[RMDB]
RNA sequence: GGGAACGACUCGAGUAGAGUCGAAAAGAUAUGGAUGGAUUCUAGGGAGUUAGACUUCGGAAACGAAGUGUAACGACGAUCUAGAUCCAUCCUAAGUCAAACUCUUCGGACUUCGGUCCGAAGAGAAGGUUAAGUAAUGCUUCGGCAUUACUUAACCAAAAGAAACAACAACAACAAC
Reactivity to DMS in 0.01 (KOAc 150mM, MgCl2 10mM, bicine 150mM(pH8.5), 24C), signal-to-noise 2, nucleotides 027 to 126: g000a020u010a300u000g000g020a020u000g010g010a000u000u000c000u000a000g030g000g010a070g040u000u000a060g010a010c010u000u010c000g000g020a100a130a270c000g010a010a010g010u010g000u010a010a020c010g000a100c300g000a060u030c020u000a000g000a020u000c000c000a000u000c010c000u010a010a060g000u000c030a240a140a210c000u010c000u000u000c010g000g000a020c000u010u020c270g020g000u000c000c000g000a000a010g000a000g000a040a020
Reactivity to 2A3 in 0.01 (KOAc 150mM, MgCl2 10mM, bicine 150mM(pH8.5), 24C), signal-to-noise 2, nucleotides 027 to 126: g020a010u050a030u140g020g010a000u020g000g030a030u300u120c010u010a010g000g090g040a130g010u000u010a030g050a030c000u010u010c010g030g030a080a050a030c000g020a020a000g010u080g230u030a010a010c000g060a040c050g030a040u020c000u010a000g000a010u000c000c000a000u000c000c010u000a000a000g000u000c000a010a040a220c000u020c000u000u000c000g020g000a010c010u060u060c300g170g000u010c010c000g000a000a000g000a000g000a000a040